An RNA of 177 nucleotides, treated with DMS and read out base by base. The DMS profile rests on 1,086 reads.
RNA sequence: GGGAACGACUCGAGUAGAGUCGAAAAGGCUCCACCUUCGGGUGGAGCCAUCUACCGAGAUAGCACCUCGGUAUAAAAGUGCAACCCUUGGAAACAAGGGAAUAAGCCCCUGGUUCGCCAGGGGCAAAGACACUGGAUAUUUCGAUAUCCAGUGUCUAAAAGAAACAACAACAACAAC
Reactivity to DMS in 0.01 (KOAc 150mM, MgCl2 10mM, bicine 150mM(pH8.5), 24C), signal-to-noise 1, nucleotides 027 to 126: g000g000c000u000c000c010a010c010c010u010u010c140g040g020g060u010g020g000a010g040c000c010a000u000c020u010a300c010c020g000a000g010a000u000a030g000c010a030c020c010u000c000g010g000u010a020u010a000a000a010a030g010u000g020c000a290a100c010c010c000u000u010g000g000a250a170a140c010a000a000g000g010g000a020a030u020a060a180g020c030c000c000c000u000g000g000u000u020c180g000c010c000a020g010g000g010g010c010a020a010
The data come from the RNA Mapping Database (RMDB), library M2PK50.
Values cover nucleotides 27 to 126.